[RMDB]
The record gives the reactivity of an RNA of 177 nucleotides to DMS and 2A3.
It was measured as part of the RMDB library RFMREP.
RNA sequence: GGGAACGACUCGAGUAGAGUCGAAAAUUGGGCCUUUGAUGGAUCUUUUGGAAUCUGACUGGGACUACUUCUGGGCAACCGGAGGCGGACUCGGACGGAAUCUGAUCGUAACGUCUUUGGCAGGAUUUGACUGUAUAAAGUUCGCUUUAUACAGUCAAAAAGAAACAACAACAACAAC
Reactivity to DMS in 0.01 (KOAc 150mM, MgCl2 10mM, bicine 150mM(pH8.5), 24C), signal-to-noise 2, nucleotides 027 to 126: u020u000g020g000g010c010c010u010u000u000g020a040u000g000g000a190u000c000u010u000u000u000g000g000a060a050u000c000u000g010a100c000u010g000g000g020a130c010u000a060c010u000u000c000u000g040g010g000c300a080a150c000c000g010g010a030g010g020c020g020g010a060c020u000c010g010g020a080c000g010g010a030a090u000c000u010g010a020u000c060g010u000a090a300c010g010u000c000u000u000u000g000g040c020a090g020g000a190u000u000
Reactivity to 2A3 in 0.01 (KOAc 150mM, MgCl2 10mM, bicine 150mM(pH8.5), 24C), signal-to-noise 2, nucleotides 027 to 126: u070u030g100g100g020c010c010u000u030u050g010a010u010g000g070a180u240c010u020u060u010u010g050g000a030a020u000c020u000g020a030c020u010g000g010g050a020c000u010a000c000u040u010c010u010g000g000g000c030a070a060c010c000g020g000a000g000g020c020g010g010a020c010u000c000g000g010a000c000g000g000a020a010u000c000u020g010a010u020c010g020u050a050a030c010g020u000c000u000u020u020g000g000c010a020g090g040a040u020u010